[RMDB]
RNA sequence: GGGAACGACUCGAGUAGAGUCGAAAAAAUUGCAGGAGAUUAUCUGAGAUCUGCAAUGUAGACAUUCCGUAACUCUGAUAUUUUGCUGUGAAGCUGUGUAUAAGCAGGUUUAAUUGGUACGUCAGGACCCAGGAGGAUCAUUCGUGAUCCUCCUGGGAAAAGAAACAACAACAACAAC
Reactivity to DMS in 0.01 (KOAc 150mM, MgCl2 10mM, bicine 150mM(pH8.5), 24C), signal-to-noise 1, nucleotides 027 to 126: a060a060u010u000g020c030a030g010g000a110g000a180u010u000a080u000c130u010g010a120g000a130u000c000u000g000c040a000a000u000g010u000a070g020a160c200a130u000u000c020c010g000u000a050a100c090u000c040u000g010a040u000a060u010u000u030u020g000c000u000g010u010g000a070a060g010c020u010g020u000g030u000a060u000a070a160g010c000a030g030g020u000u000u000a030a150u020u010g020g000u000a020c200g000u000c030a100g000g010a300